[RMDB]
RNA sequence: GGGAACGACUCGAGUAGAGUCGAAAAACGGUGAACAUAAGAUUCUGCAUCCAAUGGAAUAUCGUAGUUCACAACUAAGCUAAUACGCUCAAUAUCAAUACCACGAGCUGCCACAUCGGUUGCAACCGAUACCUUUAGCGUUCGCGCUAAAGGUAUCAAAAGAAACAACAACAACAAC
Reactivity to 2A3 in 0.01 (KOAc 150mM, MgCl2 10mM, bicine 150mM(pH8.5), 24C), signal-to-noise 5, nucleotides 027 to 126: a000c080g030g010u020g010a010a010c020a050u200a140a040g010a060u070u010c020u090g030c030a110u070c060c030a050a140u210g030g020a080a030u080a040u140c040g020u050a050g010u010u010c010a000c010a020a030c030u090a070a010g020c020u080a090a030u090a140c120g000c030u010c020a060a040u050a030u190c060a090a040u050a160c020c050a030c060g020a020g000c030u020g010c010c000a060c010a140u070c060g070g000u050u070g000c010a040a040c050c030
Reactivity to DMS in 0.01 (KOAc 150mM, MgCl2 10mM, bicine 150mM(pH8.5), 24C), signal-to-noise 5, nucleotides 027 to 126: a110c220g020g010u000g010a020a020c010a100u000a180a200g000a060u000u000c060u000g000c140a100u020c120c170a060a080u010g010g010a050a040u000a050u010c070g030u000a130g010u010u000c030a010c040a060a100c130u000a080a100g000c040u010a050a090u000a080c110g000c010u010c050a040a070u000a060u000c130a050a060u010a060c070c030a080c140g000a060g010c020u000g000c040c050a060c070a070u010c090g010g000u010u010g010c080a110a050c120c070
Conditions: 150 mM KOAc, 10 mM MgCl2 and 150 mM bicine (pH 8.5), 24 C.
An RNA of 177 nucleotides, treated with 2A3 and DMS and read out base by base.
2A3 adducts were read by reverse transcription with SuperScript II with manganese.
DMS adducts were read by reverse transcription with MarathonRT.